The record gives the reactivity of an RNA of 207 nucleotides to 2A3.
Reactivities are given for positions 27 through 156.
For 2A3, 585 sequencing reads were counted.
[RMDB]
RNA sequence: GGGAACGACUCGAGUAGAGUCGAAAAGCGCAAAUCCACAAACGCCAACGAUGAGCGUUUCGCUGUAGCCGCUUAAGGCAACAGCCGGGGCCGCCUGAGCCCUGUUACUAAAGACGGCUGGCGGGGGUAAUUACUUAUUGCUUCGGCAAUAAGUAAACUCGUUGUAAGUGUUCGCACUUACAACGAGAAAAGAAACAACAACAACAAC
Reactivity to 2A3 in 0.01 (KOAc 150mM, MgCl2 10mM, bicine 150mM(pH8.5), 24C), signal-to-noise 1, nucleotides 027 to 156: g060c020g010c090a060a070a020u050c010c030a070c080a090a030a070c060g040c040c010a120a130c110g140a180u110g040a030g030c000g000u010u060u070c100g050c000u020g010u100a070g010c000c000g060c120u170u200a090a100g000g030c010a000a010c030a000g000c000c010g010g000g000g000c000c080g000c010c020u070g020a000g020c000c000c000u020g020u040u000a010c010u000a000a010a000g000a000c010g020g010c020u060g040g020c050g010g000g000g020g020u020a170a030u050u000a020c010u000u000a000u000u000g010c010u030u050c090g130g000c000a000a000u000a000a000g010u020a000a000a000